[RMDB]
RNA sequence: GGGAACGACUCGAGUAGAGUCGAAAACGCGUAUAUACGCAUAGCGAUAAUACGCCGCAUAGCGGCGUAUGCGAUACGCUAUUAUCGCCGCAUACGCGCGGCGUAUAUACGCAUAAUAGCGUAUGCGGUUACUUACGAAAUUCGUUUCGUAAGUAACAAAAGAAACAACAACAACAAC
Reactivity to 2A3 in 0.01 (KOAc 150mM, MgCl2 10mM, bicine 150mM(pH8.5), 24C), signal-to-noise 9, nucleotides 027 to 126: c040g000c000g000u010a000u000a000u000a030c000g000c010a010u010a000g030c000g010a010u030a120a010u000a110c000g000c000c050g000c160a300u180a290g030c010g010g000c000g000u000a000u010g000c020g050a050u080a240c010g000c020u010a030u050u090a060u130c060g020c050c010g000c000a000u010a010c000g030c010g020c060g040g000c000g000u000a000u000a000u000a000c000g000c000a000u050a020a040u030a010g030c000g010u010a000u010g010c010g010
Reactivity to DMS in 0.01 (KOAc 150mM, MgCl2 10mM, bicine 150mM(pH8.5), 24C), signal-to-noise 9, nucleotides 027 to 126: c090g010c000g010u000a010u000a010u000a010c010g020c010a110u000a010g010c000g010a140u000a120a020u000a000c000g010c000c000g020c010a220u010a170g020c010g010g010c000g020u000a000u000g010c220g010a120u010a090c020g010c010u000a010u000u010a100u010c130g010c030c030g000c000a010u000a000c010g010c000g020c180g020g010c000g010u000a000u000a000u000a000c010g010c000a070u010a030a050u010a080g010c000g010u000a000u000g000c020g010